[RMDB]
The record gives the reactivity of an RNA of 177 nucleotides to DMS and 2A3.
The 2A3 profile rests on 1,575 reads.
For DMS, 574 sequencing reads were counted.
RNA sequence: GGGAACGACUCGAGUAGAGUCGAAAAGAUAUGGAGCAACCAAGGCCUUGGAUUUAUAGUCACAGUACGUUAGUCGGAAACGACUAACGUAUCACAGCUAUUGUCAGGCUCAAAGUGCUCCUAAGUCCACCUAGUUACGCUUCGGCGUAACUAGGUGAAAAGAAACAACAACAACAAC
Reactivity to DMS in 0.01 (KOAc 150mM, MgCl2 10mM, bicine 150mM(pH8.5), 24C), signal-to-noise 1, nucleotides 027 to 126: g010a160u000a300u000g050g000a000g080c050a030a050c000c020a150a300g000g030c000c000u030u010g010g000a070u000u040u020a000u000a020g040u040c080a230c300a300g020u000a000c000g020u000u000a000g050u000c000g000g000a130a100a260c040g030a000c000u000a000a000c000g030u000a000u000c010a080c300a290g000c010u000a000u000u030g000u000c040a050g000g000c030u020c030a010a090a300g000u000g000c000u000c000c000u010a000a070g040u000c000
Reactivity to 2A3 in 0.01 (KOAc 150mM, MgCl2 10mM, bicine 150mM(pH8.5), 24C), signal-to-noise 1, nucleotides 027 to 126: g110a000u050a060u260g010g020a000g020c020a070a170c070c050a100a040g010g060c050c030u170u280g230g000a050u210u300u060a080u020a000g070u150c070a000c060a080g000u000a000c010g000u020u020a000g010u010c020g040g070a030a060a130c040g000a000c020u000a000a000c000g010u010a000u000c000a010c030a000g000c010u020a020u040u060g070u050c010a010g020g040c040u000c060a210a230a000g000u000g000c010u080c000c000u010a190a010g040u010c040
Notes:
It was measured as part of the RMDB library TTRINS.